[RMDB]
RNA sequence: GGGAACGACUCGAGUAGAGUCGAAAAAUGACGGCCAAUUAGAAUCUGCUGUUCAGAGCGUGCCAGGUAUAGAAUGGGCGCAUGAGGAUGAUGACGACGAGUAGUAAGAUGUUAUCUUGGUUACAGCCCGAUGGUGACGUUUCGACGUCACCAUCGGAAAAGAAACAACAACAACAAC
Reactivity to DMS in 0.01 (KOAc 150mM, MgCl2 10mM, bicine 150mM(pH8.5), 24C), signal-to-noise 2, nucleotides 027 to 126: a100u030g020a100c120g000g020c080c060a050a070u000u010a140g030a100a100u000c040u000g000c000u000g000u000u000c040a110g010a190g010c040g020u010g020c030c000a020g020g040u000a110u000a100g010a120a070u000g000g000g000c090g010c030a100u010g070a110g000g010a120u000g000a060u010g010a060c140g030a030c130g000a100g000u000a030g040u000a070a050g000a050u000g020u000u000a060u000c110u000u000g010g000u000u000a150c090a110g020c110
Reactivity to 2A3 in 0.01 (KOAc 150mM, MgCl2 10mM, bicine 150mM(pH8.5), 24C), signal-to-noise 2, nucleotides 027 to 126: a000u150g020a050c080g020g000c000c000a000a100u150u060a110g060a020a040u000c020u070g000c030u060g030u080u030c090a060g000a020g040c020g000u090g270c020c000a020g050g030u120a170u050a180g210a140a030u070g000g020g000c030g010c010a000u080g060a020g070g040a020u060g040a020u060g060a050c000g000a010c020g010a040g040u030a000g000u010a130a160g010a040u080g000u030u030a130u080c020u010u010g110g030u050u050a030c030a050g090c000
Chemical mapping of a 177-nucleotide RNA with DMS and 2A3. It was measured as part of the RMDB library OK2TST. The reactions ran in a buffer of 150 mM KOAc, 10 mM MgCl2 and 150 mM bicine (pH 8.5), at 24 C. High 2A3 reactivity points to a flexible backbone, as in loops and unpaired stretches.